[RMDB]
RNA sequence: GGGAACGACUCGAGUAGAGUCGAAAAAUAAACCGCGUUGGGAACCAAGCCUUGAGUUCUGGAGACCCACGGUACAAGGCUUGGUUCUAGACAUGUGGGUCUCCAGUCCCACUCCCUACGCCAAAAACUAUUGUAUUGAGUUCGCUCAAUACAAUAGAAAAGAAACAACAACAACAAC
Reactivity to 2A3 in 0.01 (KOAc 150mM, MgCl2 10mM, bicine 150mM(pH8.5), 24C), signal-to-noise 3, nucleotides 027 to 126: a000u050a020a080a040c030c040g040c010g050u040u070g020g010g020a030a020c030c040a040a050g110c010c040u160u140g100a110g080u130u090c020u020g010g000a020g000a020c020c000c000a000c020g040g010u070a120c060a070a010g000g000c010u140u210g050g000u040u000c000u000a000g000a010c030a090u180g000u010g000g000g000u000c000u000c010c000a000g020u020c000c000c010a020c010u030c000c000c000u020a000c020g010c000c010a030a080a050a020a030
Reactivity to DMS in 0.01 (KOAc 150mM, MgCl2 10mM, bicine 150mM(pH8.5), 24C), signal-to-noise 5, nucleotides 027 to 126: a090u000a060a080a130c070c050g020c090g020u000u010g020g000g010a050a050c040c040a030a040g000c040c030u000u010g010a220g010u010u000c020u000g000g010a020g000a040c010c000c010a030c010g010g020u000a060c050a020a010g000g000c010u000u010g000g000u000u010c020u000a080g010a070c120a060u010g040u000g000g010g010u000c010u000c020c010a010g000u000c020c000c010a160c110u000c010c000c000u000a050c090g010c050c170a030a040a110a070a090
The data come from the RNA Mapping Database (RMDB), library M2PK90. Chemical mapping of a 177-nucleotide RNA with 2A3 and DMS. 2A3 adducts were read by reverse transcription with SuperScript II with manganese. DMS adducts were read by reverse transcription with MarathonRT. Values cover nucleotides 27 to 126. The RNA was probed in 150 mM KOAc, 10 mM MgCl2 and 150 mM bicine (pH 8.5) at 24 C.